[RMDB]
RNA sequence: GGGAACGACUCGAGUAGAGUCGAAAAUCUGCAAUCUUCGGAUUGCAGAAAAUACGGAUCCAUACGCAUCCAUACGGAUCCAUACGGAUCCAUACGGAUCCAAAACGUACCUCUUCGGAGGUACGAAGACAGAAGGGUACUUCGGUACCCUUCUGUCAAAAGAAACAACAACAACAAC
Reactivity to DMS in 0.01 (KOAc 150mM, MgCl2 10mM, bicine 150mM(pH8.5), 24C), signal-to-noise 1, nucleotides 027 to 126: u020c000u000g010c010a010a000u000c000u020u000c270g000g000a000u000u000g000c000a040g030a040a020a090a130u000a030c150g010g000a030u010c020c000a100u010a020c200g040c150a040u000c020c030a130u010a060c080g000g000a000u000c010c000a060u010a060c200g010g010a000u000c000c000a100u000a010c090g000g010a000u000c030c020a090a030a070a160c000g010u030a000c000c000u000c000u000u000c210g000g000a000g010g000u000a000c000g010a060a010
Reactivity to 2A3 in 0.01 (KOAc 150mM, MgCl2 10mM, bicine 150mM(pH8.5), 24C), signal-to-noise 1, nucleotides 027 to 126: u010c000u000g000c000a000a010u000c010u010u020c120g120g010a000u000u010g000c000a000g050a000a010a000a000u160a020c070g000g000a000u000c020c010a010u040a080c080g040c060a090u050c030c020a010u060a160c070g040g000a000u020c000c000a020u090a040c080g010g020a000u020c000c010a010u100a130c110g000g010a000u040c010c000a000a050a000a000c000g000u000a000c010c000u000c010u040u050c240g120g000a000g000g000u000a000c000g000a020a010
Annotation: Structure probing data (DMS and 2A3) for a 177-nucleotide construct. Values are in units of 0.01, from 0 to 300, in steps of 10. The 2A3 profile rests on 2,157 reads. Reactivities are given for positions 27 through 126. For DMS, 793 sequencing reads were counted. For DMS the reverse transcriptase was MarathonRT. The data come from the RNA Mapping Database (RMDB), library M2PK50.